[RMDB]
RNA sequence: GGGAACGACUCGAGUAGAGUCGAAAACAUCUCUUCCUCUAGUGAGCGAUUCGUGCUCCGUUGGGCUCAUUAUUAUUCGCUUUACGGACGAGCGAGUAACAUCACGGCACGAGGGGAAUCAGGUGGCUCUCGGAGGAGGUUUCGACCUUCUCUGGGGAAAAGAAACAACAACAACAAC
Reactivity to DMS in 0.01 (KOAc 150mM, MgCl2 10mM, bicine 150mM(pH8.5), 24C), signal-to-noise 9, nucleotides 027 to 126: c050a020u010c010u000c170u000u000c000c000u000c020u010a090g020u010g000a080g010c060g010a110u020u010c050g010u020g000c090u010c000c040g020u000u010g000g000g000c010u010c130a090u030u030a120u030u020a060u010u020c110g010c000u000u000u010a080c040g000g010a060c120g000a060g000c010g000a010g010u010a050a050c200a080u020c120a210c080g010g000c030a020c020g000a030g010g000g000g000a020a030u010c210a030g000g010u000g000g000c060
Reactivity to 2A3 in 0.01 (KOAc 150mM, MgCl2 10mM, bicine 150mM(pH8.5), 24C), signal-to-noise 9, nucleotides 027 to 126: c010a020u010c010u000c000u010u010c000c000u000c000u010a020g010u010g040a030g050c040g060a080u040u060c020g020u070g030c040u000c010c010g030u050u090g030g010g000c020u020c120a070u020u220a070u130u090a070u100u150c040g000c000u020u010u060a050c050g040g030a030c050g030a030g030c000g000a000g030u050a030a030c030a090u130c050a010c020g050g000c020a000c030g010a020g000g010g000g000a000a020u050c010a030g010g010u010g020g020c010